[RMDB]
RNA sequence: GGGAACGACUCGAGUAGAGUCGAAAAGAUAUGGACCCAUGGAGGGAGCUUAAACAUUCGGAAACGAAUGUGAGCGAGGAUCUCCUGUGGGUCCUAAGUCAAAAGCACCAAUGUUCGCAUUGGUGCAGCAAGAAAUGAACUUCGGUUCAUUUCUUGCAAAAGAAACAACAACAACAAC
Reactivity to DMS in 0.01 (KOAc 150mM, MgCl2 10mM, bicine 150mM(pH8.5), 24C), signal-to-noise 3, nucleotides 027 to 126: g000a050u000a300u010g000g000a040c000c000c000a020u000g040g000a030g000g000g010a070g020c000u000u000a090a180a100c010a000u010u000c000g010g000a070a070a140c000g010a010a000u000g020u000g000a040g010c000g010a080g040g000a050u010c030u000c000c000u050g070u000g000g010g000u000c000c000u000a010a050g010u010c030a120a060a170a150g000c010a000c000c000a000a010u000g020u000u020c290g030c010a010u000u000g000g020u000g020c000a010
Reactivity to 2A3 in 0.01 (KOAc 150mM, MgCl2 10mM, bicine 150mM(pH8.5), 24C), signal-to-noise 2, nucleotides 027 to 126: g010a020u060a030u130g000g010a010c010c000c000a020u070g010g000a050g010g030g000a060g030c010u100u030a300a300a020c000a010u000u000c010g030g000a090a030a030c020g000a000a010u010g000u010g000a000g000c020g060a240g070g050a060u000c000u010c030c070u080g040u100g010g000g030u000c010c010u000a030a000g000u000c030a010a080a120a050g010c000a000c000c000a000a000u030g040u110u120c300g000c210a010u000u000g000g000u000g030c000a000